[RMDB]
RNA sequence: GGGAACGACUCGAGUAGAGUCGAAAAUGCGCGACCGGAUCCUUCGUAUAAAGCGGCAGUUCGCGCAACAGCCGCGCGCCGGAAAAGACGCGGAGCGUUCCGGCUUCGUAGCCAGCCGCAACAGGUGCGGUAUAGUCCUGUUCGCAGGACUAUACCGAAAAGAAACAACAACAACAAC
Reactivity to 2A3 in 0.01 (KOAc 150mM, MgCl2 10mM, bicine 150mM(pH8.5), 24C), signal-to-noise 6, nucleotides 027 to 126: u120g010c000g000c010g030a020c010c020g000g020a010u020c010c030u020u040c000g010u060a060u040a190a130a040g060c010g020g000c020a050g030u160u160c020g000c010g000c060a020a070c040a030g080c030c010g000c010g000c010g000c010c010g070g000a070a060a040a030g110a050c130g020c000g020g000a020g020c140g020u010u020c010c010g000g000c040u040u030c030g010u040a060g020c030c010a020g030c000c000g080c040a070a110c040a120g040g030u080g060
Reactivity to DMS in 0.01 (KOAc 150mM, MgCl2 10mM, bicine 150mM(pH8.5), 24C), signal-to-noise 4, nucleotides 027 to 126: u010g000c020g010c060g000a050c040c030g000g000a030u010c040c010u010u020c000g000u020a150u030a100a100a070g000c000g010g040c040a070g050u010u020c030g030c060g020c060a140a040c160a090g010c080c010g020c000g000c260g020c010c000g040g000a080a050a070a130g000a110c160g010c000g010g020a010g000c110g000u000u000c010c010g000g020c080u020u010c030g000u020a040g030c040c100a140g010c000c020g000c090a170a080c180a080g010g020u020g000